[RMDB]
RNA sequence: GGGAACGACUCGAGUAGAGUCGAAAACACCGCUACCCAACACCGCGGGGUGCCGCAGCGCCGCGGAAGCGGUCCUGACAGCGCAGUUGGCCCGUGAGGCGCUGAACACCAACUGGGUCAAGCUCGACUAGACGUACAUGUUCGCAUGUACGUCUAGAAAAGAAACAACAACAACAAC
Reactivity to DMS in 0.01 (KOAc 150mM, MgCl2 10mM, bicine 150mM(pH8.5), 24C), signal-to-noise 4, nucleotides 027 to 126: c160a140c020c010g010c000u000a070c020c020c020a150a160c270a160c030c030g000c000g020g000g000g020u000g010c000c090g020c050a070g000c040g020c000c010g000c080g010g040a060a070g000c000g040g010u010c150c020u020g010a120c070a030g000c100g000c070a080g030u020u000g000g010c060c010c000g030u020g010a260g030g000c070g000c020u010g000a130a120c130a130c030c030a120a060c100u000g000g000g000u010c070a060a090g000c000u000c060g000a300
Reactivity to 2A3 in 0.01 (KOAc 150mM, MgCl2 10mM, bicine 150mM(pH8.5), 24C), signal-to-noise 5, nucleotides 027 to 126: c060a020c000c010g000c020u040a050c010c000c010a010a050c030a030c040c020g010c020g010g030g010g050u060g070c070c090g080c060a040g010c080g040c010c000g020c040g020g010a000a010g000c000g000g010u020c010c000u070g040a050c020a030g020c050g010c060a060g030u100u040g050g000c010c020c020g080u070g080a210g020g000c010g000c050u030g020a070a020c030a020c050c010a050a060c060u040g020g000g000u030c040a040a030g020c030u050c060g060a050